[RMDB]
This 177-nucleotide RNA was probed chemically with 2A3 and DMS. The reactions ran in a buffer of 150 mM KOAc, 10 mM MgCl2 and 150 mM bicine (pH 8.5), at 24 C. High DMS reactivity at an A or C suggests that its Watson-Crick edge is free.
RNA sequence: GGGAACGACUCGAGUAGAGUCGAAAAAUCACCCCCCUUGGACUUAGUACGCGAUUUGAGGCGGUUGUUCCACGUGGGAAGCAGGCUCGGCACCCAAUCCGACAGGGAAAAGUCGUAGGCUCCGGCGAGCUUAACAUGAGUUCGCUCAUGUUAAGCUAAAAGAAACAACAACAACAAC
Reactivity to 2A3 in 0.01 (KOAc 150mM, MgCl2 10mM, bicine 150mM(pH8.5), 24C), signal-to-noise 7, nucleotides 027 to 126: a000u080c050a120c010c000c000c000c010c020u000u030g030g000a010c020u070u040a060g100u180a090c050g050c060g150a250u070u050u200g140a130g040g060c030g020g040u040u080g030u090u020c000c010a040c040g030u100g010g020g010a030a020g020c050a020g070g000c030u000c020g020g010c040a050c000c020c000a010a050u070c050c040g050a040c060a070g050g020g010a030a100a020a050g040u020c020g020u040a060g070g000c010u020c020c010g030g000c020g030
Reactivity to DMS in 0.01 (KOAc 150mM, MgCl2 10mM, bicine 150mM(pH8.5), 24C), signal-to-noise 4, nucleotides 027 to 126: a040u050c060a100c030c010c010c020c020c050u000u020g010g000a030c040u000u020a070g010u020a110c060g000c040g000a100u010u020u030g020a100g000g010c040g000g000u010u000g030u020u000c040c030a100c090g000u030g010g030g020a080a070g050c060a060g000g030c030u010c040g010g000c050a150c030c020c010a100a070u010c080c030g020a050c130a130g040g000g010a030a090a100a130g020u000c020g020u010a070g000g010c020u020c020c040g000g000c080g010